Conditions: 150 mM KOAc, 10 mM MgCl2 and 150 mM bicine (pH 8.5), 24 C. The record gives the reactivity of an RNA of 177 nucleotides to 2A3 and DMS. Values cover nucleotides 27 to 126. 2A3 adducts were read by reverse transcription with SuperScript II with manganese. In probing experiments dimethyl sulfate is read out at A N1 and C N3, which are open when not base-paired. For DMS, 5,058 sequencing reads were counted. DMS adducts were read by reverse transcription with MarathonRT. For 2A3, 1,963 sequencing reads were counted. Source: RMDB library OK2TRN, as collected in RNAgym.
RNA sequence: GGGAACGACUCGAGUAGAGUCGAAAAAAAAUGGGCUGCAUCAAUGGGUGUUGAAGUCAGUUUCUUCCUGAUAGAUGAAAACCGUUUCCGCCAUAACGCCAGUGGUAGUCUGGGGGGCGAGGAUUGCUCUAUCUCUCUCAUUCGUGAGAGAGAUAGAAAAAGAAACAACAACAACAAC
Reactivity to 2A3 in 0.01 (KOAc 150mM, MgCl2 10mM, bicine 150mM(pH8.5), 24C), signal-to-noise 2, nucleotides 027 to 126: a010a000a010a030u050g000g020g000c010u030g010c000a000u000c030a000a260u100g180g010g010u090g040u120u120g020a020a010g070u080c050a000g000u040u030u040c010u040u020c010c010u040g050a100u160a180g160a080u160g040a070a050a070a070c040c010g000u000u060u000c030c000g000c030c010a070u110a150a050c080g060c060c000a050g040u040g110g150u110a060g120u010c010u020g010g020g020g060g000g000c010g000a020g030g040a050u020u170g010c010
Reactivity to DMS in 0.01 (KOAc 150mM, MgCl2 10mM, bicine 150mM(pH8.5), 24C), signal-to-noise 4, nucleotides 027 to 126: a010a040a050a030u010g010g010g020c010u000g010c030a060u000c050a100a080u000g010g010g030u000g010u010u000g000a060a090g010u000c040a070g010u000u000u000c050u000u000c040c020u010g010a110u010a090g010a080u010g000a080a040a060a070c080c060g000u010u000u000c030c030g000c030c040a070u000a060a070c090g000c010c020a030g010u000g010g030u010a070g020u000c060u000g010g010g010g010g020g010c050g010a050g010g000a080u010u000g020c190